[RMDB]
RNA sequence: GGGAACGACUCGAGUAGAGUCGAAAAAGCCGAGCCCAUGCGGGGCUUGGGCGCCCGGCCCAUCUGGAUCUGGGGGGGCAACCUCUGGCAAGACGGGCAGUACCAGCCCUUGCCGGAAAAUACGGCGGAGGUUACAUAGUUUCGACUAUGUAACCUCAAAAGAAACAACAACAACAAC
Reactivity to DMS in 0.01 (KOAc 150mM, MgCl2 10mM, bicine 150mM(pH8.5), 24C), signal-to-noise 2, nucleotides 027 to 126: a240g020c000c000g010a040g000c000c000c010a180u000g030c170g020g020g000g000c000u000u020g000g010g000c060g020c050c040c050g000g020c010c020c020a070u010c060u000g000g000a130u000c090u000g020g000g000g010g000g020g030c190a060a070c050c020u020c000u010g000g010c030a240a020g020a080c120g010g010g010c000a090g000u000a110c080c070a140g010c020c000c010u010u000g020c020c120g010g000a040a030a080a100u000a060c030g020g010c040g000
Reactivity to 2A3 in 0.01 (KOAc 150mM, MgCl2 10mM, bicine 150mM(pH8.5), 24C), signal-to-noise 1, nucleotides 027 to 126: a000g030c010c000g000a010g010c000c020c010a050u210g080c080g040g050g010g000c010u070u070g060g000g000c010g030c010c000c010g050g050c030c010c000a070u100c040u070g090g060a170u070c030u060g010g010g000g000g000g000g010c010a030a130c020c020u030c020u030g010g000c020a010a000g020a050c030g040g010g040c000a000g020u070a170c020c020a020g010c000c030c000u040u120g000c030c050g000g040a060a060a010a010u190a030c010g000g040c060g060
Conditions: 150 mM KOAc, 10 mM MgCl2 and 150 mM bicine (pH 8.5), 24 C. The record gives the reactivity of an RNA of 177 nucleotides to DMS and 2A3. DMS adducts were read by reverse transcription with MarathonRT. For 2A3, 2,343 sequencing reads were counted.